[RMDB]
RNA sequence: GGGAACGACUCGAGUAGAGUCGAAAAGUCGUAGUGAACGACAACGCCGGUGCGCUGACCGAUGGCGCGCUGCUGGAGCUGCGGGGGUCGGCGUCGUUUGUGUCCGGGUCGUGGCUGUCGGUGCGCGAAAUGGCAUAGGGUUCGCCCUAUGCCAUUUAAAAGAAACAACAACAACAAC
Reactivity to 2A3 in 0.01 (KOAc 150mM, MgCl2 10mM, bicine 150mM(pH8.5), 24C), signal-to-noise 4, nucleotides 027 to 126: g030u010c010g030u050a080g150u100g250a160a000c010g020a000c000a040a000c010g080c030c000g050g060u190g010c020g010c010u080g130a060c020c010g010a020u060g030g000c000g030c010g000c040u060g040c030u090g060g010a010g020c010u010g000c040g020g000g010g000g050u130c030g000g070c010g100u070c000g020u050u170u180g050u020g050u000c010c020g020g000g000u100c030g030u010g190g020c020u010g020u060c000g000g030u060g030c020g000c000g000
Reactivity to DMS in 0.01 (KOAc 150mM, MgCl2 10mM, bicine 150mM(pH8.5), 24C), signal-to-noise 2, nucleotides 027 to 126: g000u010c000g000u010a130g020u040g010a130a030c000g020a040c020a120a110c140g000c010c010g000g050u010g010c000g000c020u000g010a070c040c030g000a050u010g010g000c010g000c010g010c020u000g010c040u030g010g000a080g010c020u020g020c030g000g000g010g010g010u010c040g000g000c010g030u000c060g010u030u040u010g000u000g010u010c000c030g000g000g000u010c030g000u000g000g010c010u020g010u000c010g020g010u010g000c030g000c050g000